This 207-nucleotide RNA was probed chemically with 2A3 and DMS. Values cover nucleotides 27 to 156. Conditions: 150 mM KOAc, 10 mM MgCl2 and 150 mM bicine (pH 8.5), 24 C. It was measured as part of the RMDB library OK3TST. The 2A3 profile rests on 2,131 reads.
RNA sequence: GGGAACGACUCGAGUAGAGUCGAAAACGAUGAACGGUUGAACCCCGUGAUUUACGGUAGCGGCGCGACCCUCCGCGUCCAGCAGGGCCGUUCUGUCGCGAUCUAUGUCGCGCAGGGCGUCUUCGGUGGACAGCAGCGAGCGCAGCAGCUGCGGGCCACCGAUCGGAGAAUUCGUUCUCCGAUCGGUAAAAGAAACAACAACAACAAC
Reactivity to 2A3 in 0.01 (KOAc 150mM, MgCl2 10mM, bicine 150mM(pH8.5), 24C), signal-to-noise 3, nucleotides 027 to 156: c050g060a070u180g090a080a010c020g020g020u080u100g060a040a030c050c010c000c000g020u080g080a190u070u120u220a050c040g020g010u020a010g020c020g020g030c010g000c010g020a080c000c050c010u000c010c020g000c010g000u000c000c000a030g100c020a080g000g000g000c040c040g000u000u010c000u060g210u280c040g000c010g010a010u030c090u300a100u300g040u000c000g000c000g000c010a010g000g000g000c000g030u000c000u120u130c040g100g080u000g000g010a030c050a090g000c030a020g030c040g110a020g020c080g000c070a050g000c020a020g000c000u010g000c000g030g150g000c010c010
Reactivity to DMS in 0.01 (KOAc 150mM, MgCl2 10mM, bicine 150mM(pH8.5), 24C), signal-to-noise 1, nucleotides 027 to 156: c060g010a080u000g010a100a090c030g020g000u000u010g030a130a300c060c050c010c010g000u010g000a130u000u010u000a040c000g000g040u000a080g050c000g000g000c030g000c020g010a140c090c040c020u000c050c010g050c080g000u010c010c010a050g010c050a050g010g100g040c050c020g000u050u000c010u000g000u000c060g000c000g010a000u030c160u010a220u000g020u000c000g000c020g000c030a030g000g000g000c000g000u000c000u000u000c040g010g020u000g010g000a050c000a090g020c050a050g040c060g000a180g000c070g000c030a070g000c000a170g030c010u020g030c010g010g040g010c070c030